[RMDB]
RNA sequence: GGGAACGACUCGAGUAGAGUCGAAAAUGGUUAAAUACACUUACCGUAGGAAAGCUGUCUCUGGAUGUGUAUCUAGAACCCAAACUUUACGAGUGUUCUGAUUUUCUCAUUAGAGUAUCGGUAAACUCGGCGAUUAUAGUGCUGAUAUUGAUAUACGGAAAUAAGCCUGUUUCGACAGGCUUAUUUCAAAAGAAACAACAACAACAAC
Reactivity to DMS in 0.01 (KOAc 150mM, MgCl2 10mM, bicine 150mM(pH8.5), 24C), signal-to-noise 1, nucleotides 027 to 156: u020g010g030u010u000a090a080a180u010a150c070a040c050u020u010a060c050c000g000u000a060g000g030a070a060a140g030c030u000g010u010c040u010c080u010g040g000a300u020g030u000g030u000a020u010c020u000a110g020a090a090c040c020c030a090a030a100c030u000u000u000a050c020g010a020g040u000g070u020u000c020u040g000a070u000u020u010u000c070u010c080a180u020u000a190g010a090g010u000a060u000c010g000g000u000a010a040a040c020u010c030g000g000c050g010a120u000u000a170u010a080g000u010g010c010u010g000a160u020a060u010u010g030a060u010a070u010a050c110g020
Reactivity to 2A3 in 0.01 (KOAc 150mM, MgCl2 10mM, bicine 150mM(pH8.5), 24C), signal-to-noise 2, nucleotides 027 to 156: u090g000g000u030u070a050a100a050u100a040c080a010c080u000u140a140c040c020g080u040a050g020g080a220a100a000g010c160u110g030u150c030u080c080u130g000g030a030u030g020u030g030u060a010u000c000u000a000g070a030a040c030c070c040a040a090a050c040u090u210u260a040c020g010a040g010u060g160u180u060c030u010g030a090u060u000u220u170c010u000c010a070u110u300a030g000a000g030u060a020u020c040g020g060u090a080a030a030c030u000c000g000g050c000g060a020u110u090a000u160a270g140u090g030c090u080g020a100u050a060u230u080g050a040u090a000u040a170c070g070